[RMDB]
RNA sequence: GGGAACGACUCGAGUAGAGUCGAAAAUGAGGGUCUCGCCGCAUACACUUUGAGCCCGCGUCCGAUCAUUCAUGCUGUGGCCCCUGACUACAGGGUUGAGCAGAACCCCAAGAGGCUGGAGGCGGCAAAAUUAUGUCGCUUUCGAGCGACAUAAUUUAAAAGAAACAACAACAACAAC
Reactivity to DMS in 0.01 (KOAc 150mM, MgCl2 10mM, bicine 150mM(pH8.5), 24C), signal-to-noise 2, nucleotides 027 to 126: u020g000a080g010g000g000u000c020u000c080g000c060c110g030c090a110u010a080c130a150c110u020u010u010g020a070g030c090c020c040g020c080g000u000c030c080g000a090u010c060a050u000u000c040a080u010g000c040u000g010u000g020g010c190c020c000c040u010g010a120c190u010a080c140a020g000g010g000u000u000g000a160g020c090a080g000a040a090c020c010c010c070a120a110g000a070g000g010c030u000g020g010a060g030g020c020g000g000c040a070